An RNA of 177 nucleotides, treated with DMS and 2A3 and read out base by base. DMS adducts were read by reverse transcription with MarathonRT. The reactions ran in a buffer of 150 mM KOAc, 10 mM MgCl2 and 150 mM bicine (pH 8.5), at 24 C. For 2A3 the reverse transcriptase was SuperScript II with manganese. It was measured as part of the RMDB libraries RFM100 and RFMREP. Reactivities are given for positions 27 through 126.

[RMDB]
RNA sequence: GGGAACGACUCGAGUAGAGUCGAAAAUUACGAGGUAUCAGCACUUUUCUUUCAUUAGGGGGAAGGCGUGAGGAAAGUACCAAACAGCAGCGGAGUUUUAAACUUUAAAUAGACAGGUCUGAGUGCCACUCAGAAUGCUUUUCGAAGCAUUCUGAGUAAAAGAAACAACAACAACAAC
Reactivity to DMS in 0.01 (KOAc 150mM, MgCl2 10mM, bicine 150mM(pH8.5), 24C), signal-to-noise 3, nucleotides 027 to 126: u030u020a130c060g000a090g020g010u010a040u010c050a100g010c070a050c070u020u010u000u010c000u010u030u000c080a100u010u010a100g010g010g000g000g010a060a060g000g000c070g010u020g000a100g000g000a080a030a080g030u010a130c090c050a030a060a040c090a050g000c030a020g030c030g010g000a060g000u000u000u000u000a010a100a060c060u010u010u000a070a030a090u020a050g000a060c100a080g020g000u020c060u000g040a080g020u030g000c060c080
Reactivity to 2A3 in 0.01 (KOAc 150mM, MgCl2 10mM, bicine 150mM(pH8.5), 24C), signal-to-noise 4, nucleotides 027 to 126: u200u130a060c040g030a030g020g050u060a040u140c010a010g050c030a020c020u060u040u030u040c010u030u180u080c030a120u070u260a100g000g000g000g050g010a030a010g080g000c050g030u020g020a030g020g020a100a010a030g050u020a020c000c000a080a050a000c020a010g040c010a010g020c020g050g010a040g020u000u010u040u130a070a070a020c000u090u080u080a080a120a050u130a060g040a020c040a010g010g010u010c020u030g030a020g050u070g030c000c010